[RMDB]
RNA sequence: GGGAACGACUCGAGUAGAGUCGAAAACGCGGUAAUACGUAGGGGGCGAGCGUUGUUCGGAAUUACUGGGCGUAAAGGGGGCGCAGGCGGUCUGGCAAGUCUGGUGUAAAAGGCUACGGCUCAACCGACGUUGGAAUAGGUUCGCCUAUUCCAACGUAAAAGAAACAACAACAACAAC
Reactivity to DMS in 0.01 (KOAc 150mM, MgCl2 10mM, bicine 150mM(pH8.5), 24C), signal-to-noise 2, nucleotides 027 to 126: c080g000c020g000g010u000a110a080u010a100c070g020u000a130g020g030g000g000g000c070g010a090g030c070g000u000u000g030u020u000c020g030g000a050a090u000u010a070c090u000g000g000g010c020g020u000a060a110a140g020g000g000g010g000c050g040c040a070g020g030c060g000g000u000c050u000g020g020c080a050a050g030u000c040u000g000g000u010g040u010a060a050a140a060g010g000c010u000a070c050g020g010c020u000c070a090a130c070c040g000
The record gives the reactivity of an RNA of 177 nucleotides to DMS. For DMS, 1,785 sequencing reads were counted. The data come from the RNA Mapping Database (RMDB), library OK2TST. The RNA was probed in 150 mM KOAc, 10 mM MgCl2 and 150 mM bicine (pH 8.5) at 24 C.